The record gives the reactivity of an RNA of 177 nucleotides to DMS and 2A3. It was measured as part of the RMDB library OK1LIB. Reactivities are given for positions 27 through 126. For 2A3, 3,386 sequencing reads were counted.

RNA sequence: GGGAACGACUCGAGUAGAGUCGAAAAAUUGCCGACAAGGUCCGAUAGAUGACGCGAAUACUUAGGGGUUGAAACGCAGUCCUACACGGAGCACGUAGGAGCGUCAAUGAGAAUGAUCUGAAGACGCAAAUAAUUAUUAAUUCGUUAAUAAUUAUUUAAAAGAAACAACAACAACAAC
Reactivity to DMS in 0.01 (KOAc 150mM, MgCl2 10mM, bicine 150mM(pH8.5), 24C), signal-to-noise 9, nucleotides 027 to 126: a090u020u010g010c010c020g000a090c140a120a130g000g000u010c010c030g010a180u020a070g010a090u020g010a050c030g010c020g010a080a070u010a040c060u010u010a090g010g010g000g010u000u000g000a080a090a080c090g010c050a090g010u000c010c000u000a030c070a110c060g010g000a070g010c080a060c130g010u000a040g000g010a130g010c000g010u000c020a020a150u010g000a060g010a120a120u050g010a080u000c000u000g000a160a110g000a050c050g010c030
Reactivity to 2A3 in 0.01 (KOAc 150mM, MgCl2 10mM, bicine 150mM(pH8.5), 24C), signal-to-noise 4, nucleotides 027 to 126: a000u040u060g020c010c000g010a030c030a030a020g050g020u010c010c020g020a010u050a050g080a030u090g010a030c020g030c010g050a040a030u070a090c020u090u060a050g030g080g000g010u020u060g070a110a070a010c030g010c020a010g040u010c000c010u050a040c090a000c060g100g000a040g040c030a010c090g010u040a020g000g060a010g000c000g000u000c010a010a060u080g010a030g080a110a300u280g030a090u020c000u020g040a070a060g030a030c030g000c000